[RMDB]
RNA sequence: GGGAACGACUCGAGUAGAGUCGAAAAACGUAUGCGUCGGCGGCCGGCAAUUCGGUUACCCCGGCUGCGGGUCGCAUACCGUCCAGGGGAGUCACGUUCGGAUCGACCGCUUGUGAUUGGUAGGCGGAGCCGUAGCGCACUUCGGUGCGCUACGGCUAAAAGAAACAACAACAACAAC
Reactivity to DMS in 0.01 (KOAc 150mM, MgCl2 10mM, bicine 150mM(pH8.5), 24C), signal-to-noise 1, nucleotides 027 to 126: a100c160g010u000a030u010g000c030g020u000c010g000g000c020g010g000c010c000g010g010c120a160a210u000u000c070g010g000u000u010a100c240c300c050c010g030g010c020u010g010c010g020g000g000u010c000g050c000a000u000a000c020c050g000u000c030c020a110g020g000g000g000a030g020u010c070a080c090g010u030u010c010g000g050a250u000c060g070a180c010c000g030c060u000u000g010u020g010a220u010u040g000g000u000a060g010g000c010g010g000